Chemical mapping of a 177-nucleotide RNA with 2A3 and DMS. For 2A3 the reverse transcriptase was SuperScript II with manganese. For DMS, 2,686 sequencing reads were counted. The RNA was probed in 150 mM KOAc, 10 mM MgCl2 and 150 mM bicine (pH 8.5) at 24 C. The data come from the RNA Mapping Database (RMDB), library OK1LIB.
[RMDB]
RNA sequence: GGGAACGACUCGAGUAGAGUCGAAAAGUGGUCUCAAUCCACGCAGCGCUGGCUCGUUCGAGGCGAAACGGUUCAACAGGAACGCCGGUAAAGUUUCAUUCUCAACACGUGGGAAGAAAAUCUUGAACGUAUAUCGCAGGUUCGCCUGCGAUAUACGAAAAGAAACAACAACAACAAC
Reactivity to 2A3 in 0.01 (KOAc 150mM, MgCl2 10mM, bicine 150mM(pH8.5), 24C), signal-to-noise 3, nucleotides 027 to 126: g070u040g070g010u050c080u030c210a060a100u090c000c000a030c000g040c030a030g010c030g020c070u100g000g020c000u000c040g030u090u030c030g000a030g000g020c010g040a060a110a000c030g010g010u070u040c040a120a090c030a100g080g060a040a020c050g040c010c010g070g060u190a100a130a010g020u060u000u010c070a100u070u000c060u010c020a030a250c070a050c240g120u120g000g020g010a020a000g070a040a140a000a060u030c000u060u040g020a200a010
Reactivity to DMS in 0.01 (KOAc 150mM, MgCl2 10mM, bicine 150mM(pH8.5), 24C), signal-to-noise 2, nucleotides 027 to 126: g000u000g000g050u020c170u030c270a130a090u000c060c020a050c020g040c030a110g040c160g010c110u060g050g000c030u000c080g030u000u000c000g010a050g000g070c090g030a130a100a110c060g010g030u020u030c030a160a220c120a110g000g000a070a020c110g000c070c000g000g000u000a070a060a100g000u000u000u000c020a130u000u000c000u000c000a020a100c100a160c150g020u010g000g000g010a000a020g010a040a050a080a070u000c010u000u010g010a130a130